[RMDB]
RNA sequence: GGGAACGACUCGAGUAGAGUCGAAAAUGUAAUUGCACAAGGUGAAAUUUUGGGCAACAGCAGGUCUGUGAUGCUCCUCAAUGUUCUGGGCGACACGCGCACUACAAUGUCAGUGAGAACAAGAAAAACGACUUUUGUCGAACCUACUUGAUCAAAACUUAACCAACCUGUUCGCAGGUUGGUUAAGAAAAGAAACAACAACAACAAC
Reactivity to DMS in 0.01 (KOAc 150mM, MgCl2 10mM, bicine 150mM(pH8.5), 24C), signal-to-noise 1, nucleotides 027 to 156: u010g040u010a060a140u010u000g000c020a000c030a060a090g000g050u000g030a060a110a170u000u000u000u010g000g000g040c010a060a040c060a080g040c040a040g060g040u010c050u000g050u000g010a140u000g010c040u020c020c010u020c050a070a100u010g040u000u010c030u000g030g030g020c050g000a020c070a050c030g010c010g000c050a130c050u000a050c010a060a100u000g000u000c020a070g000u000g000a130g000a050a110c050a060a100g010a040a050a080a080a180c010g040a040c010u010u010u000u000g010u000c010g020a030a070c050c010u000a080c050u000u000g030a090u000c010a090a020a090a170
Reactivity to 2A3 in 0.01 (KOAc 150mM, MgCl2 10mM, bicine 150mM(pH8.5), 24C), signal-to-noise 3, nucleotides 027 to 156: u120g000u050a030a060u110u100g000c040a040c030a070a060g020g010u070g100a080a120a190u070u100u080u100g010g010g000c020a040a030c010a060g070c050a070g000g090u020c030u020g020u030g040a110u100g020c000u100c020c010u040c040a020a110u050g020u110u020c030u030g020g020g040c040g050a020c030a010c100g040c000g010c010a020c010u060a030c030a080a080u120g050u070c010a030g010u010g060a080g020a020a020c020a040a030g090a030a060a010a010a000c020g040a010c000u070u090u100u230g030u000c010g010a030a010c000c010u030a040c020u040u080g000a020u040c020a020a000a020a120